[RMDB]
RNA sequence: GGGAACGACUCGAGUAGAGUCGAAAAUAUCGGCCGGCCAGGGUGGCGCUCUGGGGGCCGCUCGCGGCGACAAAGAUCGGCGGCGGCAUCGCCGGCGUGUCGUAGAGCUUGAGCUCGUCGGUCCGAAUCACCGUGCCCUGUUCGCAGGGCACGGUGAAAAAGAAACAACAACAACAAC
Reactivity to 2A3 in 0.01 (KOAc 150mM, MgCl2 10mM, bicine 150mM(pH8.5), 24C), signal-to-noise 1, nucleotides 027 to 126: u120a010u050c000g010g060c010c010g010g060c090c030a090g040g040g060u030g070g040c130g040c090u000c060u080g180g000g000g080g000c020c000g000c000u010c020g080c000g020g030c000g000a060c080a000a300a020g010a210u030c010g000g000c000g000g030c080g090g060c100a110u190c070g040c140c000g030g000c000g030u030g010u000c010g000u040a040g000a000g010c080u160u290g000a020g040c140u020c040g070u010c000g000g000u110c060c040g000a000a020
Source: RMDB library OK1LIB, as collected in RNAgym. Chemical mapping of a 177-nucleotide RNA with 2A3. For 2A3 the reverse transcriptase was SuperScript II with manganese. Reactivities are rounded to 0.1 and cut off at 0 and 3. Values cover nucleotides 27 to 126. For 2A3, 417 sequencing reads were counted.